Structure probing data (2A3 and DMS) for a 177-nucleotide construct. 2A3 adducts were read by reverse transcription with SuperScript II with manganese. The reactions ran in a buffer of 150 mM KOAc, 10 mM MgCl2 and 150 mM bicine (pH 8.5), at 24 C. For 2A3, 4,191 sequencing reads were counted. It was measured as part of the RMDB library TTRDEL.
RNA sequence: GGGAACGACUCGAGUAGAGUCGAAAAGAUAUGGAGGCAUAAACGGAGCGUCCCACAGUCGGAAACGACUGUGAACCGAACUACUCCGUAUGCCUCCUAAGUCAAAACGGUAAGUUCGCUUACCGAAGCAGAGAAUAAACUUCGGUUUAUUCUCUGCAAAAGAAACAACAACAACAAC
Reactivity to 2A3 in 0.01 (KOAc 150mM, MgCl2 10mM, bicine 150mM(pH8.5), 24C), signal-to-noise 3, nucleotides 027 to 126: g030a000u040a020u100g000g010a000g010g000c020a010u080a080a300a050c030g030g010a050g140c090g070u050c020c010c000a000c000a000g000u000c000g000g000a030a040a060c000g000a010c000u000g000u000g000a010a010c070c070g070a110a070c070u270a140c000u230c010c000g000u000a010u010g000c000c010u000c000c000u010a010a010g020u000c010a010a000a020a070c020g000g020u010a010a010g010u040u210c300g020c130u000u000a010c000c000g010a020a010
Reactivity to DMS in 0.01 (KOAc 150mM, MgCl2 10mM, bicine 150mM(pH8.5), 24C), signal-to-noise 3, nucleotides 027 to 126: g020a010u000a300u000g010g000a000g020g000c000a010u000a050a080a150c000g030g010a040g010c300g000u000c140c060c020a010c010a000g000u000c010g000g010a090a080a060c010g010a000c000u010g000u000g010a060a050c200c200g000a030a070c120u020a120c040u000c000c010g040u000a010u000g000c010c010u000c000c000u010a000a010g000u000c040a040a080a100a170c010g000g000u000a020a000g010u000u020c180g030c010u000u000a010c000c010g000a020a060